[RMDB]
RNA sequence: GGGAACGACUCGAGUAGAGUCGAAAAUUUACGGUAUUCGUACCGUAAACGAGCAAGCAAGCAGCGCAACGAGACAACACGAUAAUAAGAUCGAGCAUGCUGAUAGUAGGAUCUUCGGAUCCUACAAACUUAUCAAAGCGUUCGCGCUUUGAUAAGUAAAAGAAACAACAACAACAAC
Reactivity to DMS in 0.01 (KOAc 150mM, MgCl2 10mM, bicine 150mM(pH8.5), 24C), signal-to-noise 4, nucleotides 027 to 126: u000u000u000a010c010g000g010u000a010u000u010c200g020u000a000c000c000g000u000a000a000a010c100g000a130g040c070a090a080g010c090a070a070g010c030a050g010c080g000c050a040a080c100g010a070g000a070c080a050a060c120a080c090g000a050u000a070a060u010a120a120g000a100u010c030g000a110g010c070a080u000g010c060u000g010a090u010a090g020u000a000g010g000a010u000c000u000u020c140g020g000a000u010c000c000u010a000c010a040a050
Reactivity to 2A3 in 0.01 (KOAc 150mM, MgCl2 10mM, bicine 150mM(pH8.5), 24C), signal-to-noise 4, nucleotides 027 to 126: u000u000u000a010c010g000g000u020a020u010u100c140g030u030a040c000c000g000u000a000a000a000c030g010a050g100c030a110a000g020c030a080a010g020c020a020g040c000g010c110a070a080c040g020a010g040a090c020a090a010c040a060c090g080a040u070a220a050u130a160a120g080a120u040c030g010a020g040c030a060u080g020c030u040g030a060u070a100g010u000a000g000g010a000u000c000u020u010c120g060g010a000u010c010c000u000a000c000a000a010

This 177-nucleotide RNA was probed chemically with DMS and 2A3.
The reactions ran in a buffer of 150 mM KOAc, 10 mM MgCl2 and 150 mM bicine (pH 8.5), at 24 C.
For 2A3, 4,785 sequencing reads were counted.
Reactivities are given for positions 27 through 126.
For 2A3 the reverse transcriptase was SuperScript II with manganese.